[RMDB]
RNA sequence: GGGAACGACUCGAGUAGAGUCGAAAACACCUAAUGGCAGAGCACAAGAAACAAUUAAUGUCAAUCUGCGCGCAUAAGCAGAACUUGUGACUAAUUGAAGUAUUAAGAAGUAGGGAGCAUGUGAGCAAACUGGUAUCUUAUUCGUAAGAUACCAGUUAAAAGAAACAACAACAACAAC
Reactivity to 2A3 in 0.01 (KOAc 150mM, MgCl2 10mM, bicine 150mM(pH8.5), 24C), signal-to-noise 9, nucleotides 027 to 126: c090a040c010c020u080a110a080u100g060g000c030a010g030a040g070c020a020c010a070a030g030a060a080a020c020a020a030u090u130a090a110u180g030u030c010a010a050u000c020u010g000c020g000c030g000c040a100u060a280a060g000c000a000g020a050a080c050u130u140g060u050g110a040c010u030a020a020u020u040g020a040a000g020u060a050u140u090a100a080g060a070a010g030u100a030g020g010g010a020g010c020a030u060g030u030g050a040g040c040a030
Reactivity to DMS in 0.01 (KOAc 150mM, MgCl2 10mM, bicine 150mM(pH8.5), 24C), signal-to-noise 9, nucleotides 027 to 126: c150a150c020c020u010a060a080u020g010g020c040a050g010a090g010c050a080c110a030a040g000a130a180a170c030a020a040u010u010a050a110u020g010u000c030a060a130u000c000u000g000c010g010c280g010c230a120u030a080a120g010c000a010g000a030a190c180u020u010g010u010g010a030c020u000a030a030u000u010g000a050a060g010u000a040u000u010a080a070g010a050a050g000u000a040g000g000g010a060g010c050a040u010g020u010g010a080g010c120a060

Structure probing data (2A3 and DMS) for a 177-nucleotide construct. The data come from the RNA Mapping Database (RMDB), libraries RFM100 and RFMREP. Reactivities are given for positions 27 through 126. For 2A3 the reverse transcriptase was SuperScript II with manganese. DMS (dimethyl sulfate) methylates the pairing face of unpaired adenines and cytosines. Conditions: 150 mM KOAc, 10 mM MgCl2 and 150 mM bicine (pH 8.5), 24 C. High 2A3 reactivity points to a flexible backbone, as in loops and unpaired stretches.